Structure probing data (DMS and 2A3) for a 177-nucleotide construct. The DMS profile rests on 1,737 reads. The reactions ran in a buffer of 150 mM KOAc, 10 mM MgCl2 and 150 mM bicine (pH 8.5), at 24 C. For DMS the reverse transcriptase was MarathonRT. Values cover nucleotides 27 to 126.
RNA sequence: GGGAACGACUCGAGUAGAGUCGAAAAUGCCCAUUGACAGUUGCAGUAAUUGCUGGAGUUGCUGGUGCUCGCAUUCCAGACGUACCUACUACAUUGGCUUGGGUGAACAAUCAGAUAAUUUUCUUUGCAAGAAAGUUAUGUUCGCAUAACUUUCUUGAAAAGAAACAACAACAACAAC
Reactivity to DMS in 0.01 (KOAc 150mM, MgCl2 10mM, bicine 150mM(pH8.5), 24C), signal-to-noise 2, nucleotides 027 to 126: u010g000c000c000c020a120u000u010g020a060c020a030g030u010u000g050c020a020g000u000a030a170u000u010g010c010u010g010g000a030g000u000u010g050c030u020g040g000u010g010c090u000c130g030c030a020u000u000c020c020a000g000a090c070g000u010a050c230c100u000a060c040u010a020c030a000u000u000g010g000c010u000u000g000g020g010u000g010a090a070c140a080a080u020c170a140g000a110u020a090a070u010u000u000u000c020u000u000u000g000
Reactivity to 2A3 in 0.01 (KOAc 150mM, MgCl2 10mM, bicine 150mM(pH8.5), 24C), signal-to-noise 2, nucleotides 027 to 126: u050g040c030c000c020a010u000u120g030a010c020a010g050u090u030g050c010a010g000u040a030a080u130u110g030c000u020g000g030a070g000u060u030g050c060u080g000g130u130g070c060u060c060g010c000a020u030u000c000c000a010g020a040c020g030u030a030c000c020u020a020c000u020a020c010a050u000u030g000g000c000u020u020g030g010g000u030g010a030a020c030a050a060u120c040a020g040a150u070a080a020u110u010u050u000c000u020u000u000g020